[RMDB]
RNA sequence: GGGAACGACUCGAGUAGAGUCGAAAAAUAACUACGCUCUAGCAGCUUAGGCUAGCUAGCCAUCUUGCUCACGUUUCUCAAAUGGGCAGAGUAUUAAGAUGGUCACCUUUACAUUUGAUAGCGAGGGAACCAUGUUCAGGGGUGAACCGCGAAACAGCUCAAUACCGCUGUUCGCAGCGGUAUUGAGAAAAGAAACAACAACAACAAC
Reactivity to 2A3 in 0.01 (KOAc 150mM, MgCl2 10mM, bicine 150mM(pH8.5), 24C), signal-to-noise 2, nucleotides 027 to 156: a000u130a050a010c110u180a040c130g060c080u050c010u070a000g000c010a020g060c010u110u040a100g110g050c040u040a070g020c000u000a000g000c010c000a000u000c000u000u020g000c000u000c000a100c110g020u030u000u000c040u020c000a070a070a000u020g000g000g000c000a010g020a000g000u040a040u160u210a050a000g010a010u020g000g050u070c080a110c000c060u150u210u200a010c000a050u000u000u030g030a010u050a020g020c000g000a300g030g000g030a020a000c010c000a010u100g090u160u150c160a100g050g000g010g030u010g020a020a000c000c000g010c000g030a050a050a030c040a030g040